[RMDB]
RNA sequence: GGGAACGACUCGAGUAGAGUCGAAAAGGAAGAUCACAGAAUUCCUGCCUCACAUCUUGGCCGGAGUUCAGUACUUCGCCGGAUUGACAUGCCUCCGCGAAGCUCCAGGAGUUGGCGCUGUACUGGGAUUGUGCCCAGGAUUCGUCCUGGGCACAAUAAAAGAAACAACAACAACAAC
Reactivity to DMS in 0.01 (KOAc 150mM, MgCl2 10mM, bicine 150mM(pH8.5), 24C), signal-to-noise 1, nucleotides 027 to 126: g010g010a060a000g020a090u000c090a090c080a130g020a030a050u000u000c000c020u000g000c010c000u000c270a150c210a090u030c160u010u000g020g000c020c100g020g010a010g030u000u010c050a080g010u000a070c010u000u000c010g010c060c040g010g020a100u010u000g020a120c110a060u000g000c090c030u000c020c010g050c080g000a090a080g020c090u010c020c050a130g010g000a140g000u000u000g000g010c060g040c010u040g020u000a070c060u000g000g000g000
An RNA of 177 nucleotides, treated with DMS and read out base by base.
The reactions ran in a buffer of 150 mM KOAc, 10 mM MgCl2 and 150 mM bicine (pH 8.5), at 24 C.
The DMS profile rests on 966 reads.
The data come from the RNA Mapping Database (RMDB), library OK2TRN.
Values are in units of 0.01, from 0 to 300, in steps of 10.